[RMDB]
RNA sequence: GGGAACGACUCGAGUAGAGUCGAAAAAUUGGAUCCUUGCAGCGUCAUUACUUCCCUCACAGCUGGGAGGGUUCAAUUACAUUAAUAUAAGCAGACUUUACAUACGGAAUAUUGGGGAUCCUGUUACUCCGUCAUUAUUUUUCGAAAUAAUGACGGAAAAAGAAACAACAACAACAAC
Reactivity to DMS in 0.01 (KOAc 150mM, MgCl2 10mM, bicine 150mM(pH8.5), 24C), signal-to-noise 4, nucleotides 027 to 126: a020u000u000g000g000a010u000c000c010u010u000g010c000a010g000c000g000u010c190a080u040u050a120c160u000u000c010c000c000u000c160a090c160a140g020c010u000g020g000g000a010g000g000g020u000u000c010a010a010u000u000a100c130a100u010u030a090a080u020a130u040a080a110g010c100a200g000a080c050u000u000u000a040c060a090u020a120c110g000g000a080a070u030a070u020u010g010g000g010g000a070u000c020c020u010g000u010u030a060c130
Reactivity to 2A3 in 0.01 (KOAc 150mM, MgCl2 10mM, bicine 150mM(pH8.5), 24C), signal-to-noise 9, nucleotides 027 to 126: a000u020u010g000g010a000u010c000c010u010u020g170c010a000g000c000g090u100c060a080u080u200a140c050u100u050c020c010c000u060c030a110c040a040g010c000u020g000g080g020a000g000g000g000u000u020c000a000a000u010u020a020c010a040u120u280a210a110u170a110u050a170a060g070c050a020g050a090c020u080u070u050a050c060a080u140a080c050g080g070a130a060u130a100u130u110g020g000g010g010a020u010c000c000u010g050u030u030a030c030

This 177-nucleotide RNA was probed chemically with DMS and 2A3. The 2A3 profile rests on 10,390 reads. For DMS the reverse transcriptase was MarathonRT.